Structure probing data (2A3 and DMS) for a 177-nucleotide construct. High 2A3 reactivity points to a flexible backbone, as in loops and unpaired stretches. It was measured as part of the RMDB library M2PK50.
RNA sequence: GGGAACGACUCGAGUAGAGUCGAAAACGUAGAUACUUCGGUAUCUACGAAAAUAACGCUGGCGUGGGACACAGCCGGAGCUAGCCUCGGAUACUCUCAGUAAAACAGCAUGGUUCGCCAUGCUGAAGGUACAGUGACAGUUCGCUGUCACUGUACCAAAAGAAACAACAACAACAAC
Reactivity to 2A3 in 0.01 (KOAc 150mM, MgCl2 10mM, bicine 150mM(pH8.5), 24C), signal-to-noise 1, nucleotides 027 to 126: c020g000u000a000g000a020u010a000c000u040u070c220g090g010u000a000u030c000u020a020c000g010a000a000a000a000u050a040a020c040g030c120u050g040g010c000g050u100g000g060g050a020c030a000c000a190g050c030c000g050g030a040g000c040u040a020g010c020c000u040c070g070g000a020u070a090c020u000c010u030c060a040g060u190a040a080a100a100c000a000g020c010a000u020g010g060u090u070c230g000c100c010a000u000g000c030u010g000a000a000
Reactivity to DMS in 0.01 (KOAc 150mM, MgCl2 10mM, bicine 150mM(pH8.5), 24C), signal-to-noise 1, nucleotides 027 to 126: c000g000u000a000g000a000u000a000c010u010u020c200g040g030u000a000u010c000u000a000c000g010a030a050a060a100u000a090a180c070g000c070u000g040g000c140g060u010g010g000g000a100c120a040c090a050g070c050c010g010g010a070g010c020u000a120g010c050c000u010c110g000g000a140u010a040c110u000c060u010c020a080g020u010a080a110a060a170c000a010g000c000a010u010g010g010u000u000c220g030c000c010a000u010g010c000u030g010a010a030